[RMDB]
This 207-nucleotide RNA was probed chemically with DMS.
DMS adducts were read by reverse transcription with MarathonRT.
It was measured as part of the RMDB library OK3TST.
The DMS profile rests on 1,595 reads.
Values cover nucleotides 27 to 156.

RNA sequence: GGGAACGACUCGAGUAGAGUCGAAAACAAGCGCUACCCUUUGCCCUCCAAUUUCAGAUUGAUUUAGAUUUUUAAGUCCCACGGAAAGCGCAGAAUGUUGAAUAUAUUCAAGCAAGGUUUUAUAGAUCUGCAAGGGCGACAUGGGCACCAUUUGCCGAGAUUCAAUGUGGUUCGCCACAUUGAAUCUAAAAGAAACAACAACAACAAC
Reactivity to DMS in 0.01 (KOAc 150mM, MgCl2 10mM, bicine 150mM(pH8.5), 24C), signal-to-noise 1, nucleotides 027 to 156: c040a100a200g000c020g030c010u000a170c000c010c040u020u000u010g000c030c000c030u010c040c080a110a160u000u000u020c050a130g010a110u000u000g000a080u000u010u000a090g010a130u030u000u000u000u060a030a190g010u000c020c000c040a110c100g000g000a070a070a040g000c040g050c030a110g010a040a090u000g010u000u010g060a180a110u000a190u000a090u000u000c030a080a210g010c070a080a060g010g010u000u000u000u000a190u000a160g000a050u000c000u020g010c120a130a140g040g000g020c010g010a020c120a040u000g030g020g000c000a040c030c080a150u000u000u010g000c040c080g000